[RMDB]
RNA sequence: GGGAACGACUCGAGUAGAGUCGAAAAAGGCUGUGCACGAAGUUCGGCGCGAUGCCGUUGCGAUGCCGGGACUUCUUCACCGCGUCCGUACUCUUGCGCAGGGACAGCUUGGCGUUGCCGCACAGCUAACUUCGGGAAUUUUCGAAUUCCCGAAGUUAAAAGAAACAACAACAACAAC
Reactivity to DMS in 0.01 (KOAc 150mM, MgCl2 10mM, bicine 150mM(pH8.5), 24C), signal-to-noise 3, nucleotides 027 to 126: a130g000g020c000u010g000u010g000c000a190c160g000a090a070g020u000u030c000g020g000c030g020c140g020a120u030g010c020c040g000u000u000g000c050g000a070u000g000c030c000g000g000g010a170c020u010u030c020u020u010c030a110c050c020g040c000g000u020c030c070g020u010a030c040u010c010u020u000g000c000g010c070a070g030g030g000a020c300a060g010c010u000u020g020g000c020g030u010u000g020c030c130g030c010a020c000a000g000c000u020
Reactivity to 2A3 in 0.01 (KOAc 150mM, MgCl2 10mM, bicine 150mM(pH8.5), 24C), signal-to-noise 4, nucleotides 027 to 126: a000g050g000c010u000g010u010g010c040a010c120g070a080a030g080u160u120c000g020g000c030g020c070g070a050u300g050c000c030g020u020u030g020c030g040a050u060g020c010c010g010g000g110a170c010u040u030c000u070u070c060a050c090c020g000c000g040u070c050c020g050u080a120c040u030c040u160u120g020c060g010c040a160g030g060g000a030c060a020g000c020u060u050g030g000c030g020u010u090g030c030c040g000c000a020c000a010g020c010u020
An RNA of 177 nucleotides, treated with DMS and 2A3 and read out base by base. It was measured as part of the RMDB library OK1LIB. For 2A3, 2,429 sequencing reads were counted. The reactions ran in a buffer of 150 mM KOAc, 10 mM MgCl2 and 150 mM bicine (pH 8.5), at 24 C. DMS (dimethyl sulfate) methylates the pairing face of unpaired adenines and cytosines. For DMS, 5,083 sequencing reads were counted.